[RMDB]
RNA sequence: GGGAACGACUCGAGUAGAGUCGAAAAGGUUCACGGCUGCGAGGGUUGGGAUGUGAGGGAUGUCGAGAAGGGAGCGACACCUAGGGACCUUCUGUCCUCUGUCCUCCCGUCCACCCUGACUGUGGACGGUGAUUCUCCGGUUCGCCGGAGAAUCACCAAAAGAAACAACAACAACAAC
Reactivity to DMS in 0.01 (KOAc 150mM, MgCl2 10mM, bicine 150mM(pH8.5), 24C), signal-to-noise 3, nucleotides 027 to 126: g000g000u010u000c020a020c040g000g020c090u010g030c140g030a060g030g000g010u000u000g030g010g030a060u000g010u000g000a070g000g010g010a060u000g010u010c120g010a080g000a110a130g000g000g010a100g000c050g000a070c070a030c170c160u020a090g000g000g040a140c120c180u000u000c090u010g010u000c030c000u000c070u010g010u000c010c010u000c000c020c000g010u010c010c000a040c010c050c040u000g000a060c080u010g020u010g000g000a030c040
Reactivity to 2A3 in 0.01 (KOAc 150mM, MgCl2 10mM, bicine 150mM(pH8.5), 24C), signal-to-noise 1, nucleotides 027 to 126: g070g020u020u040c020a000c020g000g030c080u160g060c120g170a020g050g040g050u200u190g240g030g010a020u040g030u060g050a050g040g000g000a080u180g050u060c040g050a020g030a090a100g050g000g000a050g010c040g030a020c030a030c050c040u080a050g050g000g010a030c000c000u090u000c010u060g030u000c010c010u010c030u030g060u060c000c020u030c000c000c020g010u000c000c010a010c000c010c010u040g070a050c030u000g010u000g020g010a010c000